[RMDB]
RNA sequence: GGGAACGACUCGAGUAGAGUCGAAAACUGUUUGAGCCGGUUAUGGCGGGACAAAACUUCAGAUACAUCUGUUAUAAAGUGGAUAUGAAGCUGAACAUAACAAGUAGAGAACCUGCUAAAAACAUAGCUCAUGACCUUAUUUCGAUAAGGUCAUGAGAAAAGAAACAACAACAACAAC
Reactivity to DMS in 0.01 (KOAc 150mM, MgCl2 10mM, bicine 150mM(pH8.5), 24C), signal-to-noise 3, nucleotides 027 to 126: c070u000g000u020u000u000g000a100g040c090c190g010g020u000u040a160u020g000g040c070g010g000g000a200c180a040a030a090a180c070u030u000c010a000g000a100u000a050c000a030u010c050u000g040u000u010a030u050a090a190a080g000u000g000g000a110u020a030u000g040a030a080g020c090u010g020a090a090c100a050u000a020a020c110a070a090g000u020a070g000a220g030a030a090c000c010u000g020c030u000a030a070a020a070a020c080a060u010a050g000
Reactivity to 2A3 in 0.01 (KOAc 150mM, MgCl2 10mM, bicine 150mM(pH8.5), 24C), signal-to-noise 5, nucleotides 027 to 126: c040u030g040u070u030u090g100a020g040c040c040g020g010u050u050a060u120g050g000c000g010g000g020a020c070a030a130a020a020c010u010u020c010a020g040a100u080a110c020a040u130c060u060g070u100u110a190u120a250a230a040g030u030g080g010a030u020a050u250g030a030a030g000c030u030g010a050a000c050a070u090a100a010c010a050a050g060u060a010g070a000g010a070a040c000c000u010g010c020u090a110a040a000a020a010c030a070u150a050g030
An RNA of 177 nucleotides, treated with DMS and 2A3 and read out base by base. DMS adducts were read by reverse transcription with MarathonRT. The DMS profile rests on 3,099 reads.